[RMDB]
RNA sequence: GGGAACGACUCGAGUAGAGUCGAAAACCAGCAGGAAGGCGCGCUGCGUAAGCUCACGCAGACGGCCACAAAGUAUGUGUUAAAACUCGACGGCUGGAUACAGAAAAACAAAUCACUGGCGUCAACCAUCGGCAUCAUUGCCGGCGGUGCACUGGCGACUUAUGCCUAACUUCGGUUAGGCAUAAGUAAAAGAAACAACAACAACAAC
Reactivity to 2A3 in 0.01 (KOAc 150mM, MgCl2 10mM, bicine 150mM(pH8.5), 24C), signal-to-noise 2, nucleotides 027 to 156: c050c000a030g020c060a040g000g100a300a070g000g000c110g000c000g000c250u020g000c000g050u080a090a070g050c060u040c030a020c020g000c010a020g080a220c000g030g000c040c000a020c050a000a080a000g120u170a090u240g100u000g000u120u210a070a070a090a090c040u030c030g070a040c040g070g000c030u010g020g030a060u080a050c100a080g170a040a060a010a040a020c040a080a070a050u090c050a000c130u070g070g000c020g030u020c060a070a050c000c000a000u030c000g000g000c020a030u090c040a040u180u300g010c000c000g000g020c010g010g030u050g020c020a020c140u000g030g050c050g000
The record gives the reactivity of an RNA of 207 nucleotides to 2A3.